[RMDB]
Background
Structure probing data (DMS and 2A3) for a 177-nucleotide construct. The 2A3 profile rests on 8,371 reads. For DMS, 5,940 sequencing reads were counted. The reactions ran in a buffer of 150 mM KOAc, 10 mM MgCl2 and 150 mM bicine (pH 8.5), at 24 C. Values cover nucleotides 27 to 126.
RNA sequence: GGGAACGACUCGAGUAGAGUCGAAAAGAUAUGGAGUGCCAUAAACUCUAUGAAGUCGGAAACGAUGGAGAGUGUGGUCACUCCUAAGUCAAACAAGCUAGGGAAUGUUCGCAUUCCCUAGCUUGAAUCCGAUAAUAAACUUCGGUUUAUUAUCGGAAAAAGAAACAACAACAACAAC
Reactivity to DMS in 0.01 (KOAc 150mM, MgCl2 10mM, bicine 150mM(pH8.5), 24C), signal-to-noise 5, nucleotides 027 to 126: g000a040u000a300u010g010g000a020g030u000g000c010c010a020u000a070a100a120c000u000c000u010a190u010g000a140a170g010u000c010g000g010a170a090a200c010g000a000u000g000g000a010g000a010g020u000g010u000g000g000u020c030a000c010u000c010c000u000a020a070g010u010c030a100a110a300c010a000a010g010c000u000a000g000g000g010a020a000u010g000u000u020c230g000c020a010u000u000c000c000c010u000a000g000c000u000u000g000a050a100
Reactivity to 2A3 in 0.01 (KOAc 150mM, MgCl2 10mM, bicine 150mM(pH8.5), 24C), signal-to-noise 4, nucleotides 027 to 126: g020a020u040a050u150g000g000a010g010u000g000c000c010a040u100a130a300a080c000u000c000u030a300u240g030a020a010g010u000c000g000g030a080a030a050c000g000a000u020g000g020a000g000a000g000u030g010u000g010g050u270c030a000c010u020c000c000u000a000a010g000u010c020a040a050a100c000a010a010g000c010u010a000g040g000g020a020a010u010g020u100u130c240g020c080a000u000u000c010c000c000u000a000g000c010u000u000g000a000a000